[RMDB]
Conditions: 150 mM KOAc, 10 mM MgCl2 and 150 mM bicine (pH 8.5), 24 C. This 207-nucleotide RNA was probed chemically with DMS and 2A3. For DMS, 5,790 sequencing reads were counted.
RNA sequence: GGGAACGACUCGAGUAGAGUCGAAAAGCGAGUACAAAAUCAAUCUCUGAUGGUGUUGAAGAUGGAAUUCAAUUGAGAGCCCAUCUGUGCACCCCCUCGACCGUAUAAAUAUUCAGCCCAAGGACAGACCUAACGUCUGGGACUUCCUGAGAACCUCAUUUAGCAAUCAUUUCGAUGAUUGCUAAAUAAAAGAAACAACAACAACAAC
Reactivity to DMS in 0.01 (KOAc 150mM, MgCl2 10mM, bicine 150mM(pH8.5), 24C), signal-to-noise 3, nucleotides 027 to 156: g030c050g000a040g050u010a290c060a070a070a120a110u000c040a070a080u000c040u020c080u000g020a080u000g010g030u010g010u000u010g060a090a040g010a050u000g010g000a090a070u000u000c030a070a240u010u000g010a200g000a120g010c130c000c010a020u000c010u010g010u000g020c000a050c030c000c040c030c010u000c030g020a060c040c010g000u000a070u010a060a070a080u000a130u000u000c020a060g020c000c020c080a090a080g010g000a180c020a040g000a120c010c040u010a100a120c150g010u000c010u000g020g020g010a060c030u000u010c040c000u000g000a110g010a050a080c050c010u020c060
Reactivity to 2A3 in 0.01 (KOAc 150mM, MgCl2 10mM, bicine 150mM(pH8.5), 24C), signal-to-noise 4, nucleotides 027 to 156: g020c020g030a000g060u170a090c090a090a160a070a100u140c040a040a030u050c060u010c030u120g050a110u170g000g000u010g010u050u100g130a040a010g000a000u010g000g040a070a100u190u070c090a090a090u190u210g090a130g000a020g130c000c000c020a000u010c010u010g150u060g010c000a000c000c000c010c010c020u020c020g110a070c000c030g040u150a030u110a220a110a010u110a080u100u070c020a000g050c050c040c010a010a000g030g000a020c000a000g000a040c000c020u070a090a010c050g010u010c010u010g000g000g050a030c010u030u020c000c020u040g020a030g020a080a040c010c040u020c060
Source: RMDB library OK3TST, as collected in RNAgym. Reactivities are given for positions 27 through 156. For DMS the reverse transcriptase was MarathonRT.